[RMDB]
Description: Structure probing data (DMS and 2A3) for a 177-nucleotide construct. High 2A3 reactivity points to a flexible backbone, as in loops and unpaired stretches. Source: RMDB library OK2TST, as collected in RNAgym. The DMS profile rests on 3,672 reads. Conditions: 150 mM KOAc, 10 mM MgCl2 and 150 mM bicine (pH 8.5), 24 C. For DMS the reverse transcriptase was MarathonRT.
RNA sequence: GGGAACGACUCGAGUAGAGUCGAAAAUCUUGAGUGGCUUAAUCGCCUGCGUGCGAAUCCGAAAAUUCCAUUGAUUGUUGCCGGUUCCGCGGCAGUGGCGGUCAUGGUCGCACUGAUCCUGUGGGCACGUAAUAGCUGGUUUCGACCAGCUAUUACGAAAAGAAACAACAACAACAAC
Reactivity to DMS in 0.01 (KOAc 150mM, MgCl2 10mM, bicine 150mM(pH8.5), 24C), signal-to-noise 3, nucleotides 027 to 126: u000c050u000u000g010a110g040u000g010g010c060u000u010a110a110u000c130g000c020c010u000g010c120g020u020g020c030g010a030a060u000c050c030g010a060a080a060a100u000u010c060c100a150u000u000g020a100u010u010g000u000u000g010c150c010g010g000u010u000c070c050g040c040g020g000c010a020g000u010g020g050c040g000g010u000c090a060u000g020g000u000c010g040c010a080c050u000g010a060u000c030c020u000g040u000g010g020g030c130a220
Reactivity to 2A3 in 0.01 (KOAc 150mM, MgCl2 10mM, bicine 150mM(pH8.5), 24C), signal-to-noise 1, nucleotides 027 to 126: u040c000u020u090g050a040g010u090g020g000c030u080u120a060a010u120c010g000c020c030u020g030c040g050u080g030c020g030a020a050u010c060c040g090a010a000a000a090u160u050c040c020a110u040u110g060a060u140u140g120u080u030g040c040c000g010g000u150u000c030c030g010c010g090g020c000a030g020u030g090g100c010g020g000u030c040a060u250g030g020u030c010g030c010a030c030u040g040a060u070c030c020u060g030u090g030g000g010c010a010